[RMDB]
RNA sequence: GGGAACGACUCGAGUAGAGUCGAAAAGAUAUGGAAUACGUGGUGCCAGCUAUAUGUCGGAAACGACAUUUAGCGGUAAUUCCACAGUAUUCCUAAGUCAAAAGUAGAUGACUUCGGUCAUCUACAACACGAUUGUAUUGUUCGCAAUACAAUCGUGAAAAGAAACAACAACAACAAC
Reactivity to 2A3 in 0.01 (KOAc 150mM, MgCl2 10mM, bicine 150mM(pH8.5), 24C), signal-to-noise 4, nucleotides 027 to 126: g010a010u070a040u130g000g010a010a010u010a000c010g000u020g020g010u070g080c120c100a080g010c080u000a020u010a000u040g010u010c000g020g030a080a010a080c000g010a000c000a010u010u020u000a000g000c000g000g000u030a020a150u230u040c010c000a000c060a020g000u000a000u000u000c000c000u010a120a010g050u030c050a050a020a060a150g000u000a000g000a010u010g000a000c000u070u140c300g040g000u000c000a000u000c000u000a000c000a000a000
Reactivity to DMS in 0.01 (KOAc 150mM, MgCl2 10mM, bicine 150mM(pH8.5), 24C), signal-to-noise 5, nucleotides 027 to 126: g010a060u010a300u020g000g010a020a000u000a010c000g030u000g010g010u000g000c080c050a160g030c010u000a000u010a010u010g010u000c000g000g000a100a060a210c010g010a000c000a010u000u000u000a000g020c000g010g020u000a040a170u020u000c000c000a000c010a130g050u000a000u000u010c000c000u010a030a120g010u000c030a120a110a120a140g010u000a010g010a010u000g010a010c000u010u010c250g030g010u000c000a000u000c000u000a000c010a080a180
Source information:
Structure probing data (2A3 and DMS) for a 177-nucleotide construct. Values cover nucleotides 27 to 126. For DMS the reverse transcriptase was MarathonRT. 2A3 adducts were read by reverse transcription with SuperScript II with manganese. For 2A3, 14,539 sequencing reads were counted. The data come from the RNA Mapping Database (RMDB), library TTRDES. Conditions: 150 mM KOAc, 10 mM MgCl2 and 150 mM bicine (pH 8.5), 24 C. For DMS, 6,525 sequencing reads were counted.